[RMDB]
The record gives the reactivity of an RNA of 207 nucleotides to DMS and 2A3. The reactions ran in a buffer of 150 mM KOAc, 10 mM MgCl2 and 150 mM bicine (pH 8.5), at 24 C.
RNA sequence: GGGAACGACUCGAGUAGAGUCGAAAACAACACCAGAUGAAGCUAUAGAGCACCUCAAAGAAGAGACUGAUAAUCACUUUGAAGAAAUUGACGUUGAUGACGUAGGUUAUGGAACAAUGGUGAUAAACAAUUACAACAAGGCUAUAUUCUACAGAUAUAUGUCAUGCUAUUUCGAUAGCAUGACAUAAAAAGAAACAACAACAACAAC
Reactivity to DMS in 0.01 (KOAc 150mM, MgCl2 10mM, bicine 150mM(pH8.5), 24C), signal-to-noise 2, nucleotides 027 to 156: c020a100a040c110a110c020c020a100g020a080u050g010a090a150g010c040u000a100u000a120g000a100g030c050a090c010c040u020c040a030a070a090g030a080a150g000a100g030a130c000u000g020a130u000a070a140u000c020a070c000u020u000u000g010a030a100g000a080a140a090u010u000g000a010c050g010u000u010g000a050u000g030a040c040g000u000a040g030g000u020u000a090u010g040g040a130a120c030a070a090u020g020g060u000g020a050u020a050a120a030c030a100a120u000u020a100c100a030a100c070a030a080g030g000c080u000a060u000a100u000u000c050u010a110c050a110g020a130u000a150
Reactivity to 2A3 in 0.01 (KOAc 150mM, MgCl2 10mM, bicine 150mM(pH8.5), 24C), signal-to-noise 3, nucleotides 027 to 156: c050a000a010c040a030c030c040a030g000a060u100g050a030a010g020c040u050a040u070a160g070a050g040c040a050c030c020u070c070a090a080a010g080a090a010g020a050g040a060c060u070g040a090u100a070a050u050c020a010c060u070u030u060g050a050a030g040a040a090a060u090u080g000a030c060g010u020u060g040a040u040g020a020c040g000u010a040g050g000u050u040a020u060g000g010a050a000c000a020a100u050g000g000u000g020a000u110a020a020a000c030a080a120u160u120a040c020a090a000c010a070a020g050g000c010u030a010u010a020u190u040c000u020a050c040a010g070a040u040a040

The 2A3 profile rests on 1,710 reads.